RNA sequence: GGGAACGACUCGAGUAGAGUCGAAAAAGAUCCACGCUACGGCGUGGAUCACACGUUCAUCCCUAUUGGGACGGAAGUAGGCACAGUGCCGAAGGAACGCAUUAGUCAUGCGCUACGGCGCAUGACACACAUCAGAGUCACUUCGGUGACUCUGAAAUCGUCAUUUUUACUUCGGUAAAAAUGACGAAAAAGAAACAACAACAACAAC
Reactivity to 2A3 in 0.01 (KOAc 150mM, MgCl2 10mM, bicine 150mM(pH8.5), 24C), signal-to-noise 2, nucleotides 027 to 156: a000g020a010u000c000c000a030c010g000c000u070a090c300g090g000c030g000u000g000g000a000u000c000a000c000a020c000g000u020u010c010a030u040c000c000c010u150a300u150u300g000g000g000a000c010g020g070a050a010g000u040a000g000g000c000a070c030a110g130u140g110c000c000g010a010a000g040g010a020a000c010g030c010a040u070u160a040g000u000c000a010u020g000c000g030c000u030a030c300g150g000c000g000c000a000u000g000a000c000a000c000a000c000a080u060c000a000g000a000g000u000c000a020c000u040u050c140g060g000u000g000a000c000u000c000u010g000a000a010a020